[RMDB]
RNA sequence: GGGAACGACUCGAGUAGAGUCGAAAAUGGCUCAACGGUAUCCGGCGGUACAACUGAAUACUUGUAGCUGCCUUUUGAGCGGGUUGGCUGCAAUCCGAAACGGAGAGAUUCGUUAGGACUGCGGUUGCAUGGAGACCUACUUCGGUAGGUCUCCAUGAAAAGAAACAACAACAACAAC
Reactivity to DMS in 0.01 (KOAc 150mM, MgCl2 10mM, bicine 150mM(pH8.5), 24C), signal-to-noise 1, nucleotides 027 to 126: u000g010g000c020u000c020a070a040c300g020g000u040a030u000c050c020g000g040c000g040g000u000a040c120a090a060c170u000g030a040a070u010a080c090u000u000g000u000a040g030c000u000g020c010c000u000u000u000u010g010a070g020c010g010g010g030u010u000g010g000c000u010g000c010a010a020u000c000c000g030a070a060a000c000g000g000a010g000a210g010a210u000u000c010g010u040u030a300g000g010a010c020u000g040c010g010g010u000u000g020